[RMDB]
RNA sequence: GGGAACGACUCGAGUAGAGUCGAAAAGAUAUGGAAGGAGUAGAUGCGUCCCGUUGAAAUCGGAAACGAUGGAGGGACGAACUACAUCUCCUCCUUCCUAAGUCAAAGAUCCUGUUCGCAGGAUCAAGCCUACGUAUUUGUUCGCAAAUACGUAGGCAAAAGAAACAACAACAACAAC
Reactivity to DMS in 0.01 (KOAc 150mM, MgCl2 10mM, bicine 150mM(pH8.5), 24C), signal-to-noise 2, nucleotides 027 to 126: g000a020u000a300u000g000g000a030a000g010g010a030g030u000a000g020a010u000g000c010g000u000c000c010c000g000u000u020g000a080a100a010u000c000g010g000a110a050a110c010g000a050u000g000g010a120g020g020g000a030c000g000a010a010c100u010a300c010a000u000c000u000c090c000u000c000c000u000u000c000c010u000a010a050g000u010c020a090a110a050g000a020u000c000c000u000g020u000u010c250g020c000a020g000g000a020u000c010a030a100
Reactivity to 2A3 in 0.01 (KOAc 150mM, MgCl2 10mM, bicine 150mM(pH8.5), 24C), signal-to-noise 2, nucleotides 027 to 126: g020a010u070a030u100g000g010a010a000g000g020a000g000u000a010g000a000u000g000c020g000u000c020c000c000g020u110u090g080a090a110a030u010c000g000g000a090a020a000c010g020a020u030g070g030a080g000g000g030a000c010g000a010a020c020u090a030c010a010u000c010u010c010c000u010c000c000u010u010c000c000u000a000a000g010u020c040a150a060a080g010a000u010c000c000u000g050u040u080c300g000c050a000g020g000a000u020c020a000a010